[RMDB]
RNA sequence: GGGAACGACUCGAGUAGAGUCGAAAAGGAGGCUAUUAUCCUUCCUGAUGAGUCCGUUCCAAGGACGAAACCGUCUAUCCUGACUCCCGGUUCUGGUUAGGUCUGUGUAUCCCUACCAGAUACUUCCGAAGUAGCUUUACUUCGGUAAAGCUACUUCAAAAGAAACAACAACAACAAC
Reactivity to DMS in 0.01 (KOAc 150mM, MgCl2 10mM, bicine 150mM(pH8.5), 24C), signal-to-noise 4, nucleotides 027 to 126: g000g000a050g010g020c120u010a090u010u000a120u000c060c020u000u000c040c020u010g010a090u010g000a060g010u000c050c040g030u000u000c020c050a130a110g000g010a060c020g010a050a090a090c160c070g010u010c020u000a120u010c020c010u000g000a150c100u000c010c020c030g000g000u010u000c000u000g000g000u000u010a010g010g000u000c060u000g010u000g010u010a130u000c080c000c020u000a050c000c020a040g000a020u010a050c060u010u000c140c120
Reactivity to 2A3 in 0.01 (KOAc 150mM, MgCl2 10mM, bicine 150mM(pH8.5), 24C), signal-to-noise 3, nucleotides 027 to 126: g000g030a020g040g000c130u160a060u230u130a080u230c000c000u070u060c000c030u090g020a150u150g010a000g020u030c090c050g000u050u030c030c020a040a040g050g000a010c050g030a130a020a010c030c000g000u030c010u040a160u040c010c020u030g050a070c010u000c020c010c000g000g010u030u000c000u010g000g020u100u140a010g000g020u020c060u090g230u060g050u140a110u110c030c010c000u010a010c010c000a000g000a020u030a040c020u170u000c060c080